Structure probing data (2A3 and DMS) for a 177-nucleotide construct. For DMS, 2,789 sequencing reads were counted. Conditions: 150 mM KOAc, 10 mM MgCl2 and 150 mM bicine (pH 8.5), 24 C. Reactivities are given for positions 27 through 126. DMS adducts were read by reverse transcription with MarathonRT.
[RMDB]
RNA sequence: GGGAACGACUCGAGUAGAGUCGAAAAAUGGAACUUGCUAAUGGUACACAUACCGGUUCAGCAUUUGAUGGUACUAUGUAUGGUGCCUUUAUGGAUAAACAAGUGCACCAAGUUCAGUUAACAGACACGUAAUCAGUACGUUCGCGUACUGAUUACGAAAAGAAACAACAACAACAAC
Reactivity to 2A3 in 0.01 (KOAc 150mM, MgCl2 10mM, bicine 150mM(pH8.5), 24C), signal-to-noise 2, nucleotides 027 to 126: a000u090g030g000a000a010c010u020u050g010c030u090a030a050u050g010g060u030a010c290a010c010a050u030a050c010c020g040g000u080u070c040a000g020c020a050u100u050u210g070a060u040g010g030u020a020c010u040a040u130g020u010a100u060g020g010u010g010c010c000u000u030u020a130u090g080g020a080u170a080a080a000c020a060a010g020u020g090c020a010c010c020a010a020g000u010u040c050a010g030u050u060a050a020c010a000g040a020c020a000
Reactivity to DMS in 0.01 (KOAc 150mM, MgCl2 10mM, bicine 150mM(pH8.5), 24C), signal-to-noise 4, nucleotides 027 to 126: a060u000g000g000a060a010c010u000u000g030c070u010a060a060u000g000g030u000a010c060a150c070a070u000a040c000c160g010g000u000u000c030a070g020c060a170u010u010u010g020a050u000g010g020u000a010c030u000a090u000g020u010a050u000g000g000u000g000c000c000u000u010u000a040u010g030g010a120u010a070a090a180c070a040a000g020u000g040c090a080c040c000a040a070g000u010u000c060a100g000u010u030a060a020c090a030g010a120c300a090